[RMDB]
RNA sequence: GGGAACGACUCGAGUAGAGUCGAAAAUCUGUUUACAAGUAAUCGUUAAGUCCAUCUCUGACUACGGUUGCGGAAACAGAAGCCAGUGGGCGUCAAGUCCGAGAUGGACUAUUGGCAGAACUGGUCACUACUCCAUUGUAUUCGUACAAUGGAGUAGAAAAGAAACAACAACAACAAC
Reactivity to DMS in 0.01 (KOAc 150mM, MgCl2 10mM, bicine 150mM(pH8.5), 24C), signal-to-noise 9, nucleotides 027 to 126: u000c020u000g010u010u000u000a080c080a110a130g000u000a040a050u000c050g000u000u000a060a050g010u000c000c140a050u000c000u010c080u010g000a020c010u000a060c040g010g010u000u000g010c050g000g000a060a040a060c090a070g000a080a150g010c010c000a070g030u000g010g010g010c070g010u000c060a040a030g000u000c000c060g000a080g000a070u010g000g000a010c000u000a020u010u010g000g000c010a080g000a150a050c030u000g010g000u010c180a150
Reactivity to 2A3 in 0.01 (KOAc 150mM, MgCl2 10mM, bicine 150mM(pH8.5), 24C), signal-to-noise 3, nucleotides 027 to 126: u020c000u000g030u010u060u110a100c020a070a040g020u030a030a030u020c010g010u010u110a070a010g000u020c030c020a130u040c000u000c040u050g000a000c000u010a010c000g090g110u010u010g000c000g010g000a020a030a000c040a020g050a060a000g040c010c000a020g010u040g010g060g060c020g000u020c030a030a010g010u000c000c000g010a030g000a040u170g000g000a000c010u000a020u010u020g000g000c000a010g000a040a010c020u020g030g010u030c020a010
Chemical mapping of a 177-nucleotide RNA with DMS and 2A3.
For 2A3 the reverse transcriptase was SuperScript II with manganese.
Conditions: 150 mM KOAc, 10 mM MgCl2 and 150 mM bicine (pH 8.5), 24 C.
The 2A3 profile rests on 8,346 reads.
Values cover nucleotides 27 to 126.
It was measured as part of the RMDB library OK2TRN.